[RMDB]
RNA sequence: GGGAACGACUCGAGUAGAGUCGAAAAGUCGUCGCUGUACUCGUGCGAGUAAUCCACGAUGCUACAAGGCGCUAAGCAAUGGAAGUGAUUCUUGAGGGAAGCAAUUCUGCAGAGAUAUUUCCACCCUGGGAUGGCGUCGCCGGAUAACACCUACCCGGAGCUCUAUACUGUUCGCAGUAUAGAGCUCAAAAGAAACAACAACAACAAC
Reactivity to 2A3 in 0.01 (KOAc 150mM, MgCl2 10mM, bicine 150mM(pH8.5), 24C), signal-to-noise 2, nucleotides 027 to 156: g210u170c050g000u000c000g050c170u010g000u020a000c000u010c000g000u000g020c130g000a040g040u170a030a130u000c010c020a000c000g000a020u050g010c080u010a000c010a030a060g000g010c010g010c020u080a100a000g010c000a040a250u070g010g010a030a000g020u060g060a130u060u120c010u050u090g020a100g020g030g040a000a030g040c010a010a280u090u030c020u090g070c090a000g000a010g030a040u000a030u060u050u000c010c010a030c060c010c020u030g000g020g020a080u100g030g020c010g010u010c030g060c020c010g000g000a020u040a120a040c040a020c030c020u070a030c040c000c010g000
The data come from the RNA Mapping Database (RMDB), library ARCHII. This 207-nucleotide RNA was probed chemically with 2A3. The reactions ran in a buffer of 150 mM KOAc, 10 mM MgCl2 and 150 mM bicine (pH 8.5), at 24 C. For 2A3, 981 sequencing reads were counted.